[RMDB]
RNA sequence: GGGAACGACUCGAGUAGAGUCGAAAAGAUAUGGAUCAGUUGGGACAUGACUGUGCUCGGAAACGAGCACCAGUCAACAGCCCACUGAUCCUAAGUCAAACAGACGAACCCUUCGGGGUUCGUCUGACACCUUGUGAGAGUUCGCUCUCACAAGGUGAAAAGAAACAACAACAACAAC
Reactivity to DMS in 0.01 (KOAc 150mM, MgCl2 10mM, bicine 150mM(pH8.5), 24C), signal-to-noise 2, nucleotides 027 to 126: g000a020u010a020u010g010g030a030u000c000a000g040u020u000g030g020g000a060c080a170u020g010a010c000u000g020u000g000c020u000c010g000g000a010a040a050c000g000a000g020c000a010c300c220a010g000u010c000a080a120c190a160g000c000c000c000a020c020u020g000a010u010c000c000u000a000a060g000u000c000a170a100a270c060a020g010a010c020g010a020a010c010c010c000u000u010c300g040g010g030g000u000u000c010g020u000c000u000g000a190
Reactivity to 2A3 in 0.01 (KOAc 150mM, MgCl2 10mM, bicine 150mM(pH8.5), 24C), signal-to-noise 2, nucleotides 027 to 126: g000a000u030a020u060g010g000a000u010c020a010g030u300u260g030g000g030a060c210a300u300g000a000c040u010g020u010g000c000u010c000g020g000a020a010a010c010g000a000g000c010a000c000c000a000g000u000c000a000a090c110a020g020c000c000c000a000c010u000g000a000u020c000c020u000a000a000g000u000c020a000a040a130c010a010g000a000c030g010a000a000c040c010c020u010u100c300g040g000g000g010u000u000c010g000u000c020u000g000a000